[RMDB]
This 177-nucleotide RNA was probed chemically with DMS and 2A3.
RNA sequence: GGGAACGACUCGAGUAGAGUCGAAAACCCGAGCCGUCCAAUGCUGUAACCCAAUACAGGUCCACUGAUAAGGUGGGUGGCGGCAAAUAACGCCAUACGAUGAGUAGGGGCGUUAUGUUGAAUACCGCUCUCUACUGAUCUUCGGAUCAGUAGAGAGAAAAGAAACAACAACAACAAC
Reactivity to DMS in 0.01 (KOAc 150mM, MgCl2 10mM, bicine 150mM(pH8.5), 24C), signal-to-noise 2, nucleotides 027 to 126: c000c000c000g000a000g040c010c000g000u000c000c040a040a040u010g030c000u010g010u000a010a010c280c140c260a250a210u000a000c000a030g000g000u000c010c000a010c000u000g000a170u020a110a210g000g000u000g000g010g000u000g000g000c010g000g000c020a010a010a010u000a010a010c000g010c010c000a030u000a010c000g010a130u000g000a300g010u000a000g010g000g030g000c010g010u000u000a000u000g000u020u000g020a140a080u010a070c200c280g000
Reactivity to 2A3 in 0.01 (KOAc 150mM, MgCl2 10mM, bicine 150mM(pH8.5), 24C), signal-to-noise 1, nucleotides 027 to 126: c010c000c000g000a020g000c000c000g000u050c000c020a130a080u240g000c000u000g020u040a030a040c020c010c030a050a020u020a000c000a000g000g000u000c000c000a000c000u040g040a110u140a300a060g010g010u000g010g030g010u010g030g000c000g000g000c000a020a000a000u000a000a000c000g000c000c000a000u000a000c000g040a020u170g070a090g010u000a020g020g000g060g000c000g000u000u000a010u000g010u020u190g070a090a030u100a170c090c080g030
The data come from the RNA Mapping Database (RMDB), library RFMREP.
Values cover nucleotides 27 to 126.
For DMS, 1,326 sequencing reads were counted.
Conditions: 150 mM KOAc, 10 mM MgCl2 and 150 mM bicine (pH 8.5), 24 C.